The data come from the RNA Mapping Database (RMDB), library OK3TST. An RNA of 207 nucleotides, treated with DMS and 2A3 and read out base by base.
RNA sequence: GGGAACGACUCGAGUAGAGUCGAAAAUAUACGUCCUUGUAUCGGCUGGGCCUGUUACCACUUCAGUGAGAUUUUUCAUUUGGGAAUACAGAUAUUCUACCGGGUCCGUCUGGAGACGCACUGUAACAGAUACGAGUUCUUGUGAUGCUAGAACAUGCAACUAUAUAAACUUCGGUUUAUAUAGUUGAAAAGAAACAACAACAACAAC
Reactivity to DMS in 0.01 (KOAc 150mM, MgCl2 10mM, bicine 150mM(pH8.5), 24C), signal-to-noise 4, nucleotides 027 to 156: u000a100u000a100c090g040u000c020c010u000u000g040u010a050u000c020g010g020c030u000g010g020g000c040c030u010g010u000u000a070c040c040a130c060u000u010c070a070g020u000g010a120g000a150u010u000u000u000u000c010a140u010u010u010g020g010g020a090a070u010a300c050a130g020a100u000a060u000u010c030u010a080c140c040g010g020g020u010c010c040g020u010c030u010g000g010a090g010a090c060g020c060a060c060u010g010u000a050a100c020a060g000a110u000a050c060g010a140g020u000u000c030u010u010g020u020g000a110u000g010c010u000a080g010a090a060c100a110u010g010
Reactivity to 2A3 in 0.01 (KOAc 150mM, MgCl2 10mM, bicine 150mM(pH8.5), 24C), signal-to-noise 5, nucleotides 027 to 156: u220a010u010a030c040g040u030c010c000u000u060g050u050a060u060c020g040g020c030u060g030g030g020c000c010u020g010u030u060a050c010c020a050c050u080u040c050a060g000u030g060a140g030a170u060u060u050u120u160c040a100u110u120u160g070g010g030a030a020u090a060c030a050g140a090u100a100u150u040c020u030a100c010c030g020g000g020u010c000c020g030u020c020u030g040g020a040g020a060c020g010c050a060c050u050g010u070a080a000c010a040g020a040u090a140c040g030a040g070u030u050c020u080u070g020u050g030a070u130g060c030u090a030g050a080a010c080a020u210g020

DMS (dimethyl sulfate) methylates the pairing face of unpaired adenines and cytosines. Reactivities are given for positions 27 through 156. For 2A3, 3,422 sequencing reads were counted. For 2A3 the reverse transcriptase was SuperScript II with manganese.